RNA sequence: GGGAACGACUCGAGUAGAGUCGAAAAGAUAUGGACAUGGUAGGGAGCUUUCACAUCGGAAACGAUGUGGAGCGACGAUCUACUAUGUCCUAAGUCAAAGUCCGACCGUGUUCGCACGGUCGGACAAGGCUAUCUUAUGGUUCGCCAUAAGAUAGCCAAAAGAAACAACAACAACAAC
Reactivity to DMS in 0.01 (KOAc 150mM, MgCl2 10mM, bicine 150mM(pH8.5), 24C), signal-to-noise 1, nucleotides 027 to 126: g010a030u000a290u020g000g000a020c000a020u000g020g030u000a000g000g010g010a040g020c010u000u000u050c000a000c000a010u020c000g010g000a080a070a070c000g020a000u000g040u000g000g010a000g000c010g000a100c290g000a060u020c020u000a000c000u000a000u000g020u000c000c000u000a010a050g010u020c020a130a180a160g030u010c090c000g000a000c000c020g010u000g000u000u000c250g000c000a000c000g000g000u000c000g020g070a020c020a000a070
Reactivity to 2A3 in 0.01 (KOAc 150mM, MgCl2 10mM, bicine 150mM(pH8.5), 24C), signal-to-noise 1, nucleotides 027 to 126: g020a000u040a020u100g000g000a000c010a000u010g010g000u000a020g010g030g060a070g010c030u030u250u300c010a010c020a000u000c000g000g030a030a040a030c010g010a010u020g000u040g000g020a000g040c000g010a130c030g010a010u000c000u010a000c000u000a000u020g000u000c000c000u020a010a010g000u000c050a110a170a050g020u000c000c040g000a000c030c050g030u050g060u070u150c250g050c200a000c020g000g000u030c030g000g000a000c010a000a000